The record gives the reactivity of an RNA of 207 nucleotides to 2A3 and DMS.
As a SHAPE reagent, 2A3 marks flexible, mostly unpaired nucleotides at the ribose 2'-OH.
[RMDB]
RNA sequence: GGGAACGACUCGAGUAGAGUCGAAAAUCUCCUCUUUUGAGGAGAUCCGGUGAGAGCGCUGGAAAGGGCUUUUAACGUUGCAUUGCCCCUAUACACCUUUUAACUGGUGUAUAGUUAACCUCGUGGGCCAAUUUAAGUUUGCGUAGGAAGCAACGAAGGUAUGUGGCGAGUUCGCUCGCUAUAUGUCAAAAGAAACAACAACAACAAC
Reactivity to 2A3 in 0.01 (KOAc 150mM, MgCl2 10mM, bicine 150mM(pH8.5), 24C), signal-to-noise 5, nucleotides 027 to 156: u010c000u000c030c030u000c050u080u250u140u300g000a000g000g000a000g000a000u000c000c010g020g010u030g010a160g010a020g050c080g000c060u050g010g030a060a050a050g040g000g000c000u010u060u010u180a120a030c000g000u010u020g010c010a040u040u110g000c020c000c000c000u000a000u000a000c000a000c000c000u030u080u050u190a230a150c100u070g000g000u000g000u000a000u000a000g000u000u040a010a010c010c000u010c010g000u020g010g020g000c020c020a070a100u070u160u190a140a050g010u010u020u030g000c010g000u030a020g010g020a060a020g000c000a010a010c010g020a060a010
Reactivity to DMS in 0.01 (KOAc 150mM, MgCl2 10mM, bicine 150mM(pH8.5), 24C), signal-to-noise 6, nucleotides 027 to 156: u000c000u000c000c000u000c010u000u000u000u010g020a010g020g010a020g000a010u000c030c010g010g030u000g010a090g020a060g020c050g030c040u000g020g010a090a140a090g020g010g020c010u000u000u000u000a050a130c070g020u000u000g010c040a210u000u000g010c010c030c060c010u000a010u000a010c000a010c010c000u000u010u000u010a090a260c260u000g020g030u000g010u000a000u000a010g010u010u000a060a130c020c010u000c020g000u000g010g080g030c010c020a070a140u000u000u010a080a070g010u000u000u000g020c010g010u000a050g020g000a140a140g020c010a030a080c020g010a100a140

The RNA was probed in 150 mM KOAc, 10 mM MgCl2 and 150 mM bicine (pH 8.5) at 24 C. The DMS profile rests on 29,298 reads. Values cover nucleotides 27 to 156. It was measured as part of the RMDB library OK3TST.